The record gives the reactivity of an RNA of 177 nucleotides to 2A3 and DMS. The RNA was probed in 150 mM KOAc, 10 mM MgCl2 and 150 mM bicine (pH 8.5) at 24 C.

RNA sequence: GGGAACGACUCGAGUAGAGUCGAAAAGAUAUGGACCCGAGGUUUCAACAGCCUACUCUCGGAAACGAGAGGUAGGACAUGAAACCGAGGGUCCUAAGUCAAAGCCAUCUUGUUCGCAAGAUGGCAAGGAAUUCCUGUAGUUCGCUACAGGAAUUCCAAAAGAAACAACAACAACAAC
Reactivity to 2A3 in 0.01 (KOAc 150mM, MgCl2 10mM, bicine 150mM(pH8.5), 24C), signal-to-noise 1, nucleotides 027 to 126: g010a020u040a060u080g020g000a000c010c020c050g030a050g120g020u050u030u030c200a300a100c060a090g090c010c000u000a000c010u020c000u000c010g030g030a050a010a000c000g010a020g020a030g010g070u060a020g010g020a070c150a300u300g000a010a010a020c000c000g020a030g000g000g000u000c000c000u000a000a000g000u000c040a000a040a030g000c000c000a000u050c000u000u060g050u070u160c300g010c170a000a000g000a000u000g020g000c000a000a000
Reactivity to DMS in 0.01 (KOAc 150mM, MgCl2 10mM, bicine 150mM(pH8.5), 24C), signal-to-noise 1, nucleotides 027 to 126: g000a040u010a300u000g000g010a040c000c000c000g000a300g000g000u000u010u000c030a080a040c170a170g000c000c000u000a020c000u000c000u000c000g010g000a000a020a110c000g000a000g010a000g000g000u020a000g000g030a030c040a240u020g000a010a030a010c000c000g010a300g000g000g030u000c010c000u000a000a010g010u000c040a150a150a120g000c000c010a000u000c000u010u000g030u090u020c180g010c000a010a000g010a000u000g000g010c010a030a000
For 2A3, 1,797 sequencing reads were counted.
For 2A3 the reverse transcriptase was SuperScript II with manganese.
The DMS profile rests on 873 reads.
The data come from the RNA Mapping Database (RMDB), library TTRDEL.